[RMDB]
RNA sequence: GGGAACGACUCGAGUAGAGUCGAAAAGUCGACGCCCUGCAAUUCAAGCAGACUCGAUUACAAUGUUUGCCGCCGACGUCACGCAUGUCACGUGGUUAUUUGUACUUCAGUCUGGUUGGAUUGUAGGUAGGACGACUUGAUUCGUCAAGUCGUCCUAAAAAGAAACAACAACAACAAC
Reactivity to 2A3 in 0.01 (KOAc 150mM, MgCl2 10mM, bicine 150mM(pH8.5), 24C), signal-to-noise 5, nucleotides 027 to 126: g100u070c030g030a050c060g060c010c000c000u000g000c010a000a000u000u010c000a000a030g100c000a000g000a000c000u060c090g030a000u000u010a010c010a000a020u060g090u170u120u220g120c020c000g000c010c020g010a020c000g000u020c030a030c240g070c090a030u050g000u010c000a000c110g000u010g000g050u100u090a100u060u030u000g010u010a040c080u040u000c000a000g040u000c000u040g270g010u000u010g000g000a000u000u010g000u000a000g000g000
Reactivity to DMS in 0.01 (KOAc 150mM, MgCl2 10mM, bicine 150mM(pH8.5), 24C), signal-to-noise 2, nucleotides 027 to 126: g010u000c020g000a210c110g030c190c000c040u020g030c020a010a010u000u000c020a020a020g000c000a000g000a020c000u000c190g010a030u000u020a010c020a010a010u000g020u000u000u000g000c010c000g020c000c190g030a110c010g030u000c030a130c300g000c110a000u000g000u000c010a070c300g000u000g000g000u000u000a040u000u000u000g000u030a020c040u000u050c110a040g000u000c020u010g000g000u010u000g030g010a010u010u000g030u000a010g020g000

Chemical mapping of a 177-nucleotide RNA with 2A3 and DMS. 2A3 adducts were read by reverse transcription with SuperScript II with manganese. High DMS reactivity at an A or C suggests that its Watson-Crick edge is free. Reactivities are rounded to 0.1 and cut off at 0 and 3.